[RMDB]
RNA sequence: GGGAACGACUCGAGUAGAGUCGAAAAAUUAUGUGGUGCAUGGUCACAAGAUCUGGACCAGUUACUCCGACGUGGCCGACUGGUGUCUGCUGCUGGCCCGAACCGAACCCGGUGCUAGCCGGCACCGGCCCCGGCGUGAUUUCGAUCACGCCGGGGCAAAAGAAACAACAACAACAAC
Reactivity to 2A3 in 0.01 (KOAc 150mM, MgCl2 10mM, bicine 150mM(pH8.5), 24C), signal-to-noise 1, nucleotides 027 to 126: a000u300u210a030u070g150u110g010g000u000g080c010a090u120g140g010u100c150a050c080a150a150g000a180u000c090u010g000g050a030c000c000a070g010u050u020a010c070u020c010c000g030a120c070g000u060g020g000c010c010g000a080c100u010g010g020u040g010u080c120u180g010c010u090g000c000u050g000g000c030c000c030g100a100a070c070c020g000a020a050c000c000c000g000g000u050g000c000u010a010g080c000c020g000g050c000a000c000c040g000